Background:
The data come from the RNA Mapping Database (RMDB), library OK1LIB. An RNA of 177 nucleotides, treated with DMS and 2A3 and read out base by base. As a SHAPE reagent, 2A3 marks flexible, mostly unpaired nucleotides at the ribose 2'-OH.
RNA sequence: GGGAACGACUCGAGUAGAGUCGAAAAGAGGUGAUAUUCUGAUAGGAGGCUGAGAAGUCUCAAGGUAAAAUAUCGUCGAAUUAAUACUGGUUUAAGUACCUAUCAGAUCUUAGACUAGAUGAAGAUAGUAAGUGUUAGUAUUCGUACUAGCACUUACAAAAGAAACAACAACAACAAC
Reactivity to DMS in 0.01 (KOAc 150mM, MgCl2 10mM, bicine 150mM(pH8.5), 24C), signal-to-noise 9, nucleotides 027 to 126: g000a300g000g010u000g000a010u000a000u000u000c010u010g010a010u010a150g070g000a010g000g000c000u000g000a200g000a190a020g030u000c010u000c010a050a110g010g010u010a040a080a030a020u000a000u000c000g000u000c020g010a110a120u030u020a080a100u030a110c010u000g000g000u000u000u000a010a010g000u010a040c020c000u020a050u000c010a010g000a110u030c000u000u000a010g000a000c000u000a010g010a160u030g000a090a090g000a110u040a090
Reactivity to 2A3 in 0.01 (KOAc 150mM, MgCl2 10mM, bicine 150mM(pH8.5), 24C), signal-to-noise 9, nucleotides 027 to 126: g110a030g000g010u030g010a000u000a000u010u000c010u000g000a000u010a020g070g000a000g000g000c010u010g020a020g030a140a010g010u000c000u000c010a030a060g050g000u060a050a060a000a010u010a010u010c000g020u010c010g020a030a010u140u090a120a100u100a110c000u010g010g000u000u000u000a010a010g010u010a010c000c000u010a010u010c000a000g010a020u020c000u000u010a000g000a010c000u010a010g030a100u160g050a080a070g110a140u280a070